[RMDB]
RNA sequence: GGGAACGACUCGAGUAGAGUCGAAAAGCAAGUCGCAUCGCAAAACCGCGGCAAGUGGAGUUAGCGAGAGGAGGCUGGGUUUUGGCUUCCUUAGGCAAUCGGUCACCGAGAAGGUGUGGUCGUUACCUAGACAGUUUUCUGUUCGCAGAAAACUGAACACAGAUCUUUGUUUCGACAAAGAUCUGUGAAAAGAAACAACAACAACAAC
Reactivity to 2A3 in 0.01 (KOAc 150mM, MgCl2 10mM, bicine 150mM(pH8.5), 24C), signal-to-noise 5, nucleotides 027 to 156: g030c040a050a040g040u050c030g020c070a050u020c010g000c040a070a070a020a020c020c020g000c030g110g080c230a170a060g030u030g030g030a100g010u060u140a020g020c010g010a050g020a050g050g050a020g020g000c010u070g030g150g050u050u090u090u160g040g020c010u030u000c000c000u010u020a020g010g020c010a020a080u070c020g020g020u020c000a000c030c050g060a090g100a190a070g100g030u130g010u030g100g000u010c010g030u030u040a100c000c000u020a040g030a080c000a010g000u000u000u000u000c000u010g050u030u070c260g020c080a010g000a000a000a000a000c000u000g020a040a000
Reactivity to DMS in 0.01 (KOAc 150mM, MgCl2 10mM, bicine 150mM(pH8.5), 24C), signal-to-noise 2, nucleotides 027 to 156: g030c020a040a100g050u000c010g010c040a150u000c020g040c040a060a070a120a110c040c060g010c030g010g020c100a070a160g010u000g010g020a250g010u000u010a200g000c030g000a110g010a080g020g000a040g050g020c000u000g030g020g020u000u000u010u000g010g010c060u000u000c000c010u020u000a010g010g010c000a040a070u000c010g040g000u000c000a060c000c060g010a220g010a130a150g020g020u000g030u010g000g010u010c000g000u010u000a030c010c010u000a090g010a180c010a010g010u000u000u000u000c020u010g030u000u010c200g020c000a020g000a010a000a010a010c010u000g010a040a170
The record gives the reactivity of an RNA of 207 nucleotides to 2A3 and DMS. For 2A3, 4,400 sequencing reads were counted. The DMS profile rests on 4,234 reads. DMS adducts were read by reverse transcription with MarathonRT. The data come from the RNA Mapping Database (RMDB), library M2RFPK. Conditions: 150 mM KOAc, 10 mM MgCl2 and 150 mM bicine (pH 8.5), 24 C.